[RMDB]
RNA sequence: GGGAACGACUCGAGUAGAGUCGAAAAUGCGGGUGAAGGCAGGAGGCUGAUGGAGAGAGAGACUGGGGGGAAGAAAAGCCGAAAUGGAUUCACGGUGCUUGGGAUAGAGGACGAGAAGGGGAACUGCGAGACGAGGUAUGUUCGCAUACCUCGUCUCAAAAGAAACAACAACAACAAC
Reactivity to 2A3 in 0.01 (KOAc 150mM, MgCl2 10mM, bicine 150mM(pH8.5), 24C), signal-to-noise 1, nucleotides 027 to 126: u160g010c030g020g000g000u050g030a040a040g040g010c060a100g000g100a010g040g000c100u100g000a070u040g100g010a070g000a000g010a000g050a000g030a040c000u020g000g000g000g000g040g000a040a020g030a020a060a000a000g090c030c040g020a160a000a100u200g040g030a020u080u100c030a060c050g090g000u190g000c110u010u020g000g060g000a040u050a040g080a000g040g000a010c010g020a010g040a100a000g010g030g000g000a060a050c060u040g000c020
Reactivity to DMS in 0.01 (KOAc 150mM, MgCl2 10mM, bicine 150mM(pH8.5), 24C), signal-to-noise 1, nucleotides 027 to 126: u020g020c090g010g020g000u030g000a000a200g040g020c030a060g000g000a170g000g040c030u020g040a010u000g000g020a140g000a010g050a040g060a140g000a110c060u020g000g030g000g000g000g030a030a200g000a090a160a190a100g000c050c000g000a110a090a100u010g090g050a040u060u000c070a080c000g100g000u000g000c090u040u000g000g000g050a050u000a030g020a090g020g000a100c030g000a120g000a040a050g000g030g000g010a050a180c030u000g020c300
An RNA of 177 nucleotides, treated with 2A3 and DMS and read out base by base.
It was measured as part of the RMDB library RFM100.
Reactivities are rounded to 0.1 and cut off at 0 and 3.
Conditions: 150 mM KOAc, 10 mM MgCl2 and 150 mM bicine (pH 8.5), 24 C.
The DMS profile rests on 1,316 reads.